[RMDB]
RNA sequence: GGGAACGACUCGAGUAGAGUCGAAAAACCAGUGCCUUCCUGGUCGCCCAGGUGCGGGCACGGGUCGACGGUAUCGUGCUGCGUCGCGAAUUCACCGAAGGCACCGAUGUCAAGGCAGGGCAACGCCUCGUUGCAAUGCAUUCGUGCAUUGCAACGAAAAAGAAACAACAACAACAAC
Reactivity to DMS in 0.01 (KOAc 150mM, MgCl2 10mM, bicine 150mM(pH8.5), 24C), signal-to-noise 5, nucleotides 027 to 126: a080c000c000a080g010u000g000c040c020u000u010c070c010u000g000g020u020c180g010c180c020c010a050g010g010u020g020c120g000g000g000c010a020c000g000g000g000u000c020g000a250c030g000g010u010a080u000c020g030u000g020c010u030g010c250g010u040c010g010c030g000a030a090u030u020c140a020c010c000g000a070a260g000g000c000a090c020c000g020a130u000g010u000c020a090a110g010g010c020a070g010g000g000c070a070a080c120g000c050c020
Reactivity to 2A3 in 0.01 (KOAc 150mM, MgCl2 10mM, bicine 150mM(pH8.5), 24C), signal-to-noise 9, nucleotides 027 to 126: a000c010c010a020g030u020g030c010c020u040u040c020c000u020g030g030u090c070g040c020c000c000a030g070g040u100g060c090g000g000g000c010a000c000g010g010g000u030c020g020a050c020g000g020u040a020u060c010g010u020g000c050u170g120c070g150u290c010g030c010g020a020a090u140u100c030a040c010c010g000a020a020g020g010c020a080c060c000g100a150u040g020u030c030a040a030g050g000c020a010g050g020g000c030a060a030c070g040c010c020